[RMDB]
RNA sequence: GGGAACGACUCGAGUAGAGUCGAAAAUUGAAGGUGGUUCUAUUCCUAAAUUCAGGCAGCUAGGUGAUAUAGAGUUUAAUGAUUUUUAUUUACUGCGGGGUUUGCAAGCAGUUAAAACCACUGCUUCCCAUGUGCAUCUUUUCGAAGAUGCACAUGGAAAAGAAACAACAACAACAAC
Reactivity to DMS in 0.01 (KOAc 150mM, MgCl2 10mM, bicine 150mM(pH8.5), 24C), signal-to-noise 2, nucleotides 027 to 126: u020u000g000a100a140g000g000u010g030g010u000u000c080u000a140u000u000c030c010u010a000a050a110u000u010c090a060g010g000c050a040g010c120u020a080g020g020u030g000a060u000a070u010a070g010a060g020u000u010u010a080a080u020g000a060u010u000u010u000u020a030u020u010u010a070c020u000g020c040g030g020g010g000u000u000u010g010c090a050a080g000c030a000g000u000u010a030a030a070a050c070c050a040c020u000g000c060u010u000c090